[RMDB]
RNA sequence: GGGAACGACUCGAGUAGAGUCGAAAAGAUAUGGACAGGCGAUGCGCUAGUAAAGCUCCGAAGAACAGCUUCGGAAACGAAGCUGGGAGGAGCUUUACUAGCGAACUACAUCAGCCUGUCCUAAGUCGUUACCUUAAUUGUUCGCAAUUAAGGUAACAAAAGAAACAACAACAACAAC
Reactivity to DMS in 0.01 (KOAc 150mM, MgCl2 10mM, bicine 150mM(pH8.5), 24C), signal-to-noise 4, nucleotides 027 to 126: g000a080u000a300u010g000g000a010c000a010g010g030c020g020a020u000g010c000g000c010u000a010g000u010a010a010a010g010c000u000c000c000g000a190a190g020a220a230c000a010g010c000u000u010c000g010g000a080a070a150c010g020a010a020g000c010u000g010g010g010a120g000g000a010g010c000u000u010u010a000c010u000a010g000c000g000a010a020c100u010a300c000a000u000c000a080g030c000c000u010g020u000c000c000u010a010a060g010u010c150

An RNA of 177 nucleotides, treated with DMS and read out base by base. For DMS the reverse transcriptase was MarathonRT. The data come from the RNA Mapping Database (RMDB), library TTRINS.